[RMDB]
RNA sequence: GGGAACGACUCGAGUAGAGUCGAAAAGAUAUGGAGCAUCGGUUUGUCAGGUGGGCUAUCGGAAACGAUAGCAUACCUUGGAUUUAACCGAGUGCUCCUAAGUCAAAAGCCCGACUUCGGUCGGGCACAAGCUUAUGCACUUCGGUGCAUAAGCUUGAAAAGAAACAACAACAACAAC
Reactivity to 2A3 in 0.01 (KOAc 150mM, MgCl2 10mM, bicine 150mM(pH8.5), 24C), signal-to-noise 1, nucleotides 027 to 126: g040a020u090a020u160g000g000a000g000c000a070u000c000g000g000u000u010u040g040u020c020a000g000g040u010g030g050g000c000u000a000u000c000g050g050a130a050a060c020g000a000u010a010g060c000a000u000a000c010c000u050u250g220g010a020u300u150u300a000a010c000c000g010a010g040u030g040c000u000c000c000u020a000a010g000u000c000a000a060a180a180g000c020c000c040g000a000c000u080u100c300g110g000u000c010g000g000g010c000a000
Reactivity to DMS in 0.01 (KOAc 150mM, MgCl2 10mM, bicine 150mM(pH8.5), 24C), signal-to-noise 2, nucleotides 027 to 126: g010a080u010a300u010g000g020a000g010c000a100u000c000g010g000u010u000u000g000u000c000a000g000g040u030g000g000g000c000u020a000u010c000g010g000a120a140a200c000g030a030u000a000g020c000a040u010a000c000c010u000u010g030g000a050u000u010u000a020a000c000c000g000a000g010u000g070c010u000c030c000u010a000a050g000u010c010a100a220a220a200g010c010c010c000g000a030c000u000u020c230g030g060u000c000g010g000g000c040a000

Source information
This 177-nucleotide RNA was probed chemically with 2A3 and DMS. The data come from the RNA Mapping Database (RMDB), library TTRDES. The 2A3 profile rests on 1,761 reads. For 2A3 the reverse transcriptase was SuperScript II with manganese.